[RMDB]
RNA sequence: GGGAACGACUCGAGUAGAGUCGAAAAGAUAUGGAUACACGGGAGGAUCAGGGAUGGAACUACUCUGAGGUAUCGGAAACGAUAUGUAGGAGCCAUCCCUGAUCCGAAGAACGUGUAUCCUAAGUCAGCUAGUAAAGUGGUUCGCCACUUUACUAGCAAAAGAAACAACAACAACAAC
Reactivity to DMS in 0.01 (KOAc 150mM, MgCl2 10mM, bicine 150mM(pH8.5), 24C), signal-to-noise 1, nucleotides 027 to 126: g000a100u020a300u000g010g000a020u000a000c000a000c000g000g000g000a080g010g020a000u000c020a030g000g000g000a040u000g000g010a110a030c040u030a300c000u000c050u000g000a240g000g020u000a000u000c000g010g000a210a090a260c010g010a050u000a000u000g010u000a300g000g000a020g060c010c000a020u010c000c000c000u000g000a060u000c000c000g020a050a050g000a170a060c020g000u000g000u010a000u020c010c010u010a010a120g000u000c020a190